[RMDB]
RNA sequence: GGGAACGACUCGAGUAGAGUCGAAAAGUAGUUAUGCUGAAAAUCGUUGAGGUUGUAUGGAAUAGGUUAACCGUAAGACCUUAAGUUGAAAAACUUUGAAAUUAAUCUCAGGUAAAUUACUUUGAGUAAAACCUUCGUCGUUUCGACGACGAAGGAAGAAUCGAUCAGGUUUCGACCUGAUCGAUUCAAAAGAAACAACAACAACAAC
Reactivity to 2A3 in 0.01 (KOAc 150mM, MgCl2 10mM, bicine 150mM(pH8.5), 24C), signal-to-noise 1, nucleotides 027 to 156: g120u010a000g000u090u040a130u180g000c050u000g060a040a040a040a040u080c050g030u040u050g030a010g030g010u000u040g010u000a050u080g010g040a180a090u040a160g140g060u100u110a050a000c020c020g030u000a020a160g000a010c000c000u000u040a080a060g010u040u000g000a160a120a000a000a000c050u080u050u100g080a200a140a000u110u140a130a160u120c030u000c080a000g030g000u120a170a160a030u100u000a090c000u250u110u110g040a030g010u050a000a000a050a050c000c050u000u000c000g000u010c000g010u000u000u180c160g060a000c000g000a000c000g000a000a010g000g000a000a000

Structure probing data (2A3) for a 207-nucleotide construct.
Conditions: 150 mM KOAc, 10 mM MgCl2 and 150 mM bicine (pH 8.5), 24 C.
For 2A3, 350 sequencing reads were counted.
Reactivities are given for positions 27 through 156.